[RMDB]
RNA sequence: GGGAACGACUCGAGUAGAGUCGAAAAAAUGCCGCCGGCGCUGUUCGCGCCGAUUGUCGAAAAUCUCGCGAACGUGCGGCUGUUGGAGCGCGCACGCGUUGCCGUGGAAAAGCCGUUCGGCCACGACUGUUCGUGGUGAUUUCGAUCACCACGAACAAAAAGAAACAACAACAACAAC
Reactivity to DMS in 0.01 (KOAc 150mM, MgCl2 10mM, bicine 150mM(pH8.5), 24C), signal-to-noise 1, nucleotides 027 to 126: a100a060u010g020c020c010g040c300c030g000g000c050g010c050u010g000u000u000c080g000c030g040c110c170g000a000u000u000g060u020c280g010a080a050a030a030u000c000u010c030g040c000g010a010a010c030g000u010g010c020g000g050c020u000g020u000u000g010g010a110g000c040g020c030g000c100a050c210g060c070g000u000u010g010c030c020g060u000g000g000a120a030a130a130g010c000c020g020u000u000c110g000g000c020c080a020c060g010a110c110
Conditions: 150 mM KOAc, 10 mM MgCl2 and 150 mM bicine (pH 8.5), 24 C.
Structure probing data (DMS) for a 177-nucleotide construct.
The DMS profile rests on 760 reads.
It was measured as part of the RMDB library OK2TRN.
For DMS the reverse transcriptase was MarathonRT.